[RMDB]
RNA sequence: GGGAACGACUCGAGUAGAGUCGAAAACUUUGCAUUAAUGUCUUGGGAGCUCAGGGAAUACUUCGUAGUCACUGAAUACCUAAUUAAAGAGCAUUUUGUACCUCUCUUCAAGGGUCUCACUAUGGCAGGCUAGGAGUCGGUUCGCCGACUCCUAGCCAAAAGAAACAACAACAACAAC
Reactivity to 2A3 in 0.01 (KOAc 150mM, MgCl2 10mM, bicine 150mM(pH8.5), 24C), signal-to-noise 1, nucleotides 027 to 126: c000u120u000u070g000c000a060u000u160a170a050u230g010u000c010u040u170g000g000g120a020g070c030u000c090a090g180g000g000a060a000u020a020c000u240u010c100g000u090a020g020u070c080a000c200u060g020a020a000u100a080c000c000u030a090a060u140u020a030a060a010g050a050g000c000a010u000u040u000u300g120u070a000c000c030u100c000u020c000u070u000c010a070a070g130g000g000u030c050u050c000a100c000u150a060u120g020g000c000a020

This 177-nucleotide RNA was probed chemically with 2A3. 2A3 adducts were read by reverse transcription with SuperScript II with manganese. The RNA was probed in 150 mM KOAc, 10 mM MgCl2 and 150 mM bicine (pH 8.5) at 24 C.